[RMDB]
RNA sequence: GGGAACGACUCGAGUAGAGUCGAAAACUCUGGAGUAGAGGCUUCUAGCUUCGAAACACCAUCGAUCGUCCCUUCUUCUUUACCUCCUUCUGGCUCUUCCGAUGAGACGCGACCGGUGGCAUCACCUCUCGGUUCGUCUUCCAACCUGCUUUUUGUCGAGAUACGACAUGUUCGCAUGUCGUAUCUCAAAAGAAACAACAACAACAAC
Reactivity to 2A3 in 0.01 (KOAc 150mM, MgCl2 10mM, bicine 150mM(pH8.5), 24C), signal-to-noise 1, nucleotides 027 to 156: c030u020c020u020g020g010a030g010u030a010g000a010g030g000c020u280u090c200u300a090g020c020u010u020c010g020a000a010a030c040a020c040c040a120u060c040g000a000u010c010g000u000c000c000c000u050u040c040u040u020c010u040u110u070a120c020c030u040c000c020u040u030c020u040g010g010c010u020c000u070u030c010c030g080a100u110g060a010g000a000c030g020c110g030a030c000c000g000g000u000g010g010c010a160u160c030a070c010c000u030c000u070c000g000g000u030u020c010g000u000c000u050u000c010c030a060a060c010c010u080g050c060u190u170u010u080u080g170u150c160
The data come from the RNA Mapping Database (RMDB), library VIROID. An RNA of 207 nucleotides, treated with 2A3 and read out base by base. Values are in units of 0.01, from 0 to 300, in steps of 10. The reactions ran in a buffer of 150 mM KOAc, 10 mM MgCl2 and 150 mM bicine (pH 8.5), at 24 C.